Source: RMDB library TTRDES, as collected in RNAgym. An RNA of 177 nucleotides, treated with 2A3 and read out base by base.
RNA sequence: GGGAACGACUCGAGUAGAGUCGAAAAGAUAUGGACGUCAUAGGCAACAGCCUGGUGUCGGAAACGACACCCAGGACAUGCCUGGGACGUCCUAAGUCAAACCGGCACCAGUUCGCUGGUGCCGGAAGGGAGUGAUUGGGUUCGCCCAAUCACUCCCAAAAGAAACAACAACAACAAC
Reactivity to 2A3 in 0.01 (KOAc 150mM, MgCl2 10mM, bicine 150mM(pH8.5), 24C), signal-to-noise 1, nucleotides 027 to 126: g070a030u020a020u050g010g020a010c000g010u020c010a040u020a050g020g000c070a300a040c120a300g070c010c000u020g000g000u000g000u030c000g030g010a020a010a000c010g010a020c000a020c050c010c000a070g060g030a030c160a200u300g000c000c000u000g000g030g010a000c000g000u000c000c000u010a000a000g010u020c020a000a020a100c010c000g020g060c010a010c000c010a040g130u230u190c300g130c250u030g040g020u040g090c010c020g000g000a010a010
Annotation
The 2A3 profile rests on 1,260 reads.